RNA sequence: GGGAACGACUCGAGUAGAGUCGAAAAGCAAGGGAGCGAGUGUUAUCCGGAUGAUUGAGAGGUAUGUCGGCGAGUCUGUGUUUAUGCUUGGGAUCCGGCGGUACAUCAAGGAGCACAUGUAUGGGAAGCUAUGAAACGAGUUCGCUCGUUUCAUAGCAAAAGAAACAACAACAACAAC
Reactivity to DMS in 0.01 (KOAc 150mM, MgCl2 10mM, bicine 150mM(pH8.5), 24C), signal-to-noise 3, nucleotides 027 to 126: g000c040a090a110g020g010g000a040g000c020g000a070g000u020g000u000u010a050u020c050c020g010g020a100u020g000a100u050u000g010a090g000a080g000g000u020a030u010g000u020c020g000g000c110g000a180g010u010c020u030g000u020g010u010u010u000a070u020g010c040u020u010g000g020g000a100u000c030c010g000g000c010g010g050u010a050c080a050u030c070a030a050g000g000a090g010c030a030c070a070u010g000u000a070u020g000g010g000a110a110
Reactivity to 2A3 in 0.01 (KOAc 150mM, MgCl2 10mM, bicine 150mM(pH8.5), 24C), signal-to-noise 7, nucleotides 027 to 126: g080c070a040a060g040g030g010a050g000c040g030a060g020u070g010u080u130a100u040c000c010g040g020a060u080g030a040u040u250g080a110g020a030g090g050u100a070u160g060u040c040g020g040c030g010a020g040u010c030u050g090u020g070u040u140u110a130u160g030c030u040u060g020g050g000a030u040c000c010g000g000c030g010g020u050a030c010a040u050c020a020a080g030g000a020g030c010a000c020a080u110g050u120a110u050g020g000g040a080a010